Record summary
Chemical mapping of a 177-nucleotide RNA with DMS and 2A3. Conditions: 150 mM KOAc, 10 mM MgCl2 and 150 mM bicine (pH 8.5), 24 C. It was measured as part of the RMDB libraries RFM100 and RFMREP.
RNA sequence: GGGAACGACUCGAGUAGAGUCGAAAAUCGGCCUUUUGAACGCACUGAUGCCCUGACGCUGCUUCAUUACGGAGCUGUGUCCGGGGCCCCGGUGGAUUUCGAUCCGCCGGAGGGGUGGCCCUCCACCAAUAUGUGAUACCUUCGGGUAUCACAUAUUAAAAGAAACAACAACAACAAC
Reactivity to DMS in 0.01 (KOAc 150mM, MgCl2 10mM, bicine 150mM(pH8.5), 24C), signal-to-noise 5, nucleotides 027 to 126: u030c080g000g000c050c050u000u030u010u030g020a090a080c190g010c060a070c060u020g000a120u010g000c000c000c000u010g000a030c010g010c000u000g000c000u000u000c000a190u030u040a150c240g000g010a000g000c000u000g010u000g000u000c030c090g010g000g000g000c010c060c010c000g000g020u000g000g010a010u000u000u040c160g010a020u000c000c020g010c000c000g020g000a040g000g010g000g010u010g000g000c020c020c070u010c020c010a090c090c070
Reactivity to 2A3 in 0.01 (KOAc 150mM, MgCl2 10mM, bicine 150mM(pH8.5), 24C), signal-to-noise 9, nucleotides 027 to 126: u090c030g020g030c020c000u100u150u060u220g150a110a030c060g020c070a040c080u110g040a090u150g040c010c010c000u000g000a000c000g000c020u030g000c000u020u010c020a200u100u300a090c250g000g010a000g000c010u010g010u000g000u000c050c110g000g000g010g010c010c000c000c000g000g010u010g000g000a010u020u070u120c180g070a020u000c010c000g000c000c000g000g010a040g000g030g000g000u040g020g020c010c000c000u030c020c000a060c010c000